[RMDB]
RNA sequence: GGGAACGACUCGAGUAGAGUCGAAAAGUUUAGCAUUAAAACGACACAGUAGGCGUCGCGGUCGAUCCGGCUGAGUGCCUUGAUGCGAUCGUACAAUUGCACCAUUCCCGUCGGAUGGUAGACGGUGUACGAGUAGUAUUCAAUGUUUAGAGCGUCGUCAAGAGCUGUUAUUCGUAACAGCUCUUGAAAAAGAAACAACAACAACAAC
Reactivity to 2A3 in 0.01 (KOAc 150mM, MgCl2 10mM, bicine 150mM(pH8.5), 24C), signal-to-noise 7, nucleotides 027 to 156: g050u080u120u160a040g010c050a090u090u120a070a080a030a040c040g030a020c030a000c020a110g120u110a040g010g040c020g020u050c030g010c030g020g020u030c030g030a160u080c090c080g020g000c020u050g040a050g110u090g030c000c000u010u050g010a020u020g020c010g020a080u010c000g010u020a010c040a100a100u090u120g010c030a010c010c000a020u100u100c010c070c090g180u170c070g020g010a020u020g030g000u030a110g040a110c040g010g010u010g000u010a000c010g000a010g030u130a010g010u030a190u070u080c040a060a040u080g030u060u080u060a060g010a010g050c040g020u030c020g010
Reactivity to DMS in 0.01 (KOAc 150mM, MgCl2 10mM, bicine 150mM(pH8.5), 24C), signal-to-noise 5, nucleotides 027 to 156: g010u000u000u000a120g010c050a140u010u010a060a080a080a100c020g020a070c020a050c030a160g020u000a120g020g020c040g030u010c020g020c030g030g020u000c030g000a130u010c070c060g000g000c010u010g000a100g020u000g000c020c020u000u000g010a030u000g020c030g010a140u000c000g010u000a030c030a040a050u000u000g010c060a100c010c010a070u000u000c010c020c250g010u010c150g010g000a060u000g010g020u000a070g020a220c010g010g010u010g010u000a010c020g000a070g010u000a160g020u000a070u000u000c060a070a090u000g010u010u000u000a090g000a110g010c030g010u000c020g020